This 177-nucleotide RNA was probed chemically with 2A3 and DMS.
For DMS the reverse transcriptase was MarathonRT.
Values cover nucleotides 27 to 126.
It was measured as part of the RMDB library RFM100.
The DMS profile rests on 2,989 reads.
The RNA was probed in 150 mM KOAc, 10 mM MgCl2 and 150 mM bicine (pH 8.5) at 24 C.
RNA sequence: GGGAACGACUCGAGUAGAGUCGAAAAUCUGUGUACCCGCAGGAAAAGAAAGCAAACGCGAUGCCGUGAGUAGGGGCGACCGAAAGCGGCACAGCCCAAACCGAACAUCCGGGGGUAACUCCGGAUGUAGACAUUGUCUCUUCGGAGACAAUGUCUAAAAAGAAACAACAACAACAAC
Reactivity to 2A3 in 0.01 (KOAc 150mM, MgCl2 10mM, bicine 150mM(pH8.5), 24C), signal-to-noise 3, nucleotides 027 to 126: u060c010u030g020u010g010u060a150c030c010c000g000c020a010g040g140a080a040a020a020g150a100a100a030g060c090a150a070a060c070g010c050g110a100u050g000c000c000g020u030g020a010g000u010a000g040g050g120g160c200g050a040c000c000g000a000a000a000g000c000g000g010c000a000c000a000g000c000c020c010a020a090a040c040c090g040a030a020c000a000u000c000c000g020g000g000g000g040u040a140a120c000u000c010c000g020g000a000u000g000
Reactivity to DMS in 0.01 (KOAc 150mM, MgCl2 10mM, bicine 150mM(pH8.5), 24C), signal-to-noise 2, nucleotides 027 to 126: u050c020u000g000u010g030u010a180c080c030c000g030c000a010g020g010a090a020a090a060g000a090a090a070g000c090a080a140a080c230g000c000g020a160u010g020c000c000g000u010g010a010g030u010a140g020g000g000g000c110g010a160c000c000g010a130a130a300g000c000g000g000c000a000c040a070g000c000c010c050a040a050a070c230c060g000a080a060c020a000u000c000c000g000g000g020g000g000u040a080a110c000u000c000c000g000g000a000u000g010